[RMDB]
RNA sequence: GGGAACGACUCGAGUAGAGUCGAAAAGAUAUGGACAUGUGUUGUCGUCCAUGUGCUUUUGACGCGACAAUGGGUCGGAAACGACCUGAUCGCGAUAAGCACAUGGACGACAACCAUGUCCUAAGUCGAAUGCAGAAUACUUCGGUAUUCUGCAUUCAAAAGAAACAACAACAACAAC
Reactivity to DMS in 0.01 (KOAc 150mM, MgCl2 10mM, bicine 150mM(pH8.5), 24C), signal-to-noise 1, nucleotides 027 to 126: g010a080u020a300u000g000g020a010c010a010u010g000u050g020u000u010g010u000c030g010u000c000c010a000u020g010u010g000c010u000u000u000u000g020a190c040g000c000g030a000c090a140a100u030g010g020g000u000c000g010g000a080a110a250c020g000a040c010c000u000g010a050u000c000g030c020g010a060u000a010a030g030c010a020c000a000u000g040g010a010c000g020a000c000a000a000c000c000a000u000g010u010c000c010u010a010a070g010u000c070
An RNA of 177 nucleotides, treated with DMS and read out base by base. Reactivities are given for positions 27 through 126.